[RMDB]
RNA sequence: GGGAACGACUCGAGUAGAGUCGAAAAUUUUAAUAGCCUGAAACUGGAAACAAACUAAAAUUGUGAAUCGUUAAACAAGCUAUGGCGCAUUCAAACCAUGGAAUUCUAUUCAGCAACAGAAAGAAACUAUUGCUACAGGCACCAAAUUGGAUGGCGACAAAAUACUACGGUUCGCCGUAGUAUUUUGAAAAGAAACAACAACAACAAC
Reactivity to 2A3 in 0.01 (KOAc 150mM, MgCl2 10mM, bicine 150mM(pH8.5), 24C), signal-to-noise 2, nucleotides 027 to 156: u010u040u020u080a150a070u080a030g030c010c010u010g050a080a020a050c100u090g060g060a050a180a060c070a030a040a110c080u220a130a030a120a210u090u090g010u030g050a040a020u020c020g020u050u060a060a040a060c040a040a020g000c020u030a000u050g020g010c000g000c060a010u040u060c030a010a100a100c050c000a060u020g010g060a090a010u120u070c010u060a110u130u180c090a030g010c010a030a040c010a050g070a100a140a010g020a050a080a030c040u070a040u070u040g010c000u020a060c060a030g030g000c040a020c020c060a000a060a030u020u020g020g000a000u050g020g060c040g000a020
Reactivity to DMS in 0.01 (KOAc 150mM, MgCl2 10mM, bicine 150mM(pH8.5), 24C), signal-to-noise 1, nucleotides 027 to 156: u000u030u000u000a160a110u000a250g000c010c000u000g010a080a070a100c060u000g010g000a160a120a120c050a090a050a170c040u010a120a090a250a200u000u010g010u010g000a110a070u000c100g010u000u000a030a160a100c040a050a100g000c000u000a040u010g020g020c000g050c140a100u000u000c040a110a060a150c020c090a020u000g050g020a150a100u000u000c060u010a300u000u000c050a040g000c020a020a050c010a060g030a040a110a150g000a130a090a180c070u010a020u000u000g020c020u000a110c110a010g000g040c050a070c000c010a000a120a180u000u000g050g040a060u000g020g050c070g000a150